[RMDB]
RNA sequence: GGGAACGACUCGAGUAGAGUCGAAAAGAUAUGGAAUCGCGUAGCUUUUGACGAGAUCCCAGUCGGAAACGACUGAACUCUCGAUAAGCUACGAUGAUUCCUAAGUCAAAACGUGGCUUCGGCCACGCGAUGAUCUCCCCUUCGGGGGAGAUCAUCGAAAAGAAACAACAACAACAAC
Reactivity to 2A3 in 0.01 (KOAc 150mM, MgCl2 10mM, bicine 150mM(pH8.5), 24C), signal-to-noise 1, nucleotides 027 to 126: g020a020u080a040u230g020g000a020a000u020c000g020c000g000u000a010g030c040u210u000u160u300g300a190c070g000a020g020a000u070c000c070c000a000g000u030c010g030g090a150a070a030c000g030a020c000u040g030a120a040c050u020c000u010c010g010a020u020a110a000g030c000u010a020c000g030a040u010g000a010u000u000c000c000u030a080a040g070u040c000a030a000a060a160c010g000u030g000g000c020u120u050c300g120g000c000c000a000c000g000
Reactivity to DMS in 0.01 (KOAc 150mM, MgCl2 10mM, bicine 150mM(pH8.5), 24C), signal-to-noise 1, nucleotides 027 to 126: g000a090u000a300u000g000g000a020a010u000c000g030c000g000u000a000g010c020u000u000u040u000g000a210c110g000a000g010a010u010c160c200c050a040g010u000c010g060g000a160a170a180c010g020a020c010u010g020a030a100c200u010c000u000c000g010a100u000a000a010g010c010u000a000c010g020a010u010g010a120u000u010c000c000u000a010a060g000u020c040a080a030a150a300c000g020u000g000g000c000u000u030c240g000g050c000c010a000c000g020